[RMDB]
RNA sequence: GGGAACGACUCGAGUAGAGUCGAAAAAAAUAUACACACCGUUGGUGAGCCUGAAACUAAAAUGUGUAUCUCAACCAGUUCACCCACUGCUACAACGUUGCUAAUAUCAGAGGAUAGGAUAGAGAGGAAAUGCAAAGCUAAGCAAGCUUCAUUAAUCACGUGAACCGUUAUUCGUAACGGUUCACGUAAAAGAAACAACAACAACAAC
Reactivity to DMS in 0.01 (KOAc 150mM, MgCl2 10mM, bicine 150mM(pH8.5), 24C), signal-to-noise 1, nucleotides 027 to 156: a000a070a080u000a000u010a020c020a070c020a030c050c040g070u010u030g020g040u000g000a030g010c010c000u010g020a130a130a020c100u000a160a030a060a020u000g000u060g020u000a020u000c090u000c040a120a110c090c060a010g000u000u000c070a090c090c000c040a130c090u010g040c000u000a110c030a070a140c000g000u000u000g020c000u000a040a190u000a110u010c090a120g020a040g030g000a080u000a030g010g000a050u000a040g000a120g000a100g040g010a020a080a100u000g030c060a070a070a020g070c020u020a050a140g030c040a040a150g000c040u010u040c060a120u000u000a090a170u000c060
Reactivity to 2A3 in 0.01 (KOAc 150mM, MgCl2 10mM, bicine 150mM(pH8.5), 24C), signal-to-noise 1, nucleotides 027 to 156: a000a010a000u090a000u060a040c030a000c020a000c050c080g030u020u080g020g000u010g000a010g040c000c040u000g090a100a050a030c120u120a050a060a160a210u170g070u000g050u070a080u040c130u000c000a030a100c040c000a000g000u090u150c000a070c000c050c000a000c000u060g000c020u080a010c070a100a020c090g070u050u100g040c070u050a010a070u040a080u080c010a040g040a050g080g050a050u090a010g000g000a010u030a040g030a030g010a020g020g010a010a010a000u160g000c090a060a000a030g010c070u100a100a000g070c030a030a020g010c040u090u000c040a100u050u140a090a070u120c110
An RNA of 207 nucleotides, treated with DMS and 2A3 and read out base by base.
The DMS profile rests on 1,358 reads.
For DMS the reverse transcriptase was MarathonRT.
The data come from the RNA Mapping Database (RMDB), library OK3TST.